[RMDB]
RNA sequence: GGGAACGACUCGAGUAGAGUCGAAAAUUGGCGAGACACUAUUAGCGCUUACCAUUGCGAUGCAUUUAGCGCAAGACUCCUUUGGUACGGCCUGUAAUGUUACGGCAGAUGGUGCAUUAUCCUUGGAGUUAGAUGCUCGUUUCGACGAGCAUCUAACAAAAGAAACAACAACAACAAC
Reactivity to 2A3 in 0.01 (KOAc 150mM, MgCl2 10mM, bicine 150mM(pH8.5), 24C), signal-to-noise 1, nucleotides 027 to 126: u060u030g000g000c050g000a050g030a030c000a000c070u120a080u120u220a090g000c060g010c070u030u010a020c040c000a060u030u090g000c030g110a040u100g000c050a060u110u100u160a120g030c030g000c050a020a040g030a040c040u040c000c000u000u050u030g000g000u050a090c100g040g000c000c000u000g050u050a060a080u050g050u080u050a060c050g020g000c040a000g010a070u080g020g000u030g010c070a060u060u040a050u110c020c000u030u080g030g020a050
Reactivity to DMS in 0.01 (KOAc 150mM, MgCl2 10mM, bicine 150mM(pH8.5), 24C), signal-to-noise 3, nucleotides 027 to 126: u010u020g040g030c040g000a290g010a040c020a070c080u010a100u000u000a060g020c110g000c050u000u000a110c100c030a070u000u000g000c100g030a030u000g030c050a070u000u000u010a110g020c120g010c060a090a090g000a110c090u000c000c020u000u000u010g010g020u000a020c190g010g020c010c030u000g010u000a040a060u010g020u000u000a120c100g000g000c030a020g010a060u000g010g020u000g010c030a080u010u010a080u000c030c020u000u010g000g000a190

About this RNA
Structure probing data (2A3 and DMS) for a 177-nucleotide construct. The data come from the RNA Mapping Database (RMDB), library OK2TRN. The RNA was probed in 150 mM KOAc, 10 mM MgCl2 and 150 mM bicine (pH 8.5) at 24 C.